[RMDB]
RNA sequence: GGGAACGACUCGAGUAGAGUCGAAAACUCUGUGACAGACACACUGUGACUCAGUCACAGUGAGACAGACUCAGUGUCUGUGACUGACUCUCAGUCACACUCUCUGUGACAGUGUCUCACUCUGAGACGUUUAAGCGCCAUUCGUGGCGCUUAAACGAAAAGAAACAACAACAACAAC
Reactivity to DMS in 0.01 (KOAc 150mM, MgCl2 10mM, bicine 150mM(pH8.5), 24C), signal-to-noise 2, nucleotides 027 to 126: c060u000c010u010g000u000g010a040c040a010g010a030c200a220c040a030c020u000g000u000g010a030c040u000c200a150g000u010c000a020c010a000g000u000g020a030g000a040c020a050g000a180c090u000c140a070g050u000g020u020c000u010g000u000g010a010c000u000g010a150c300u000c300u000c000a000g010u000c000a000c030a080c110u010c120u000c010u010g010u000g010a000c010a020g000u050g030u010c020u010c020a120c170u000c070u030g000a030g030a130
Reactivity to 2A3 in 0.01 (KOAc 150mM, MgCl2 10mM, bicine 150mM(pH8.5), 24C), signal-to-noise 1, nucleotides 027 to 126: c020u080c020u010g000u020g160a000c010a010g020a010c010a000c000a000c100u050g000u010g030a020c030u060c300a040g030u000c000a010c000a020g000u010g010a010g000a010c040a010g090a050c020u010c100a120g040u010g000u020c000u030g000u010g010a010c010u000g010a020c030u000c100u020c130a010g000u040c010a000c000a010c030u090c000u000c000u030g010u020g080a020c000a010g030u030g070u070c000u000c010a030c010u080c050u110g020a020g010a050
This 177-nucleotide RNA was probed chemically with DMS and 2A3. For DMS, 1,284 sequencing reads were counted. The reactions ran in a buffer of 150 mM KOAc, 10 mM MgCl2 and 150 mM bicine (pH 8.5), at 24 C. The 2A3 profile rests on 1,645 reads.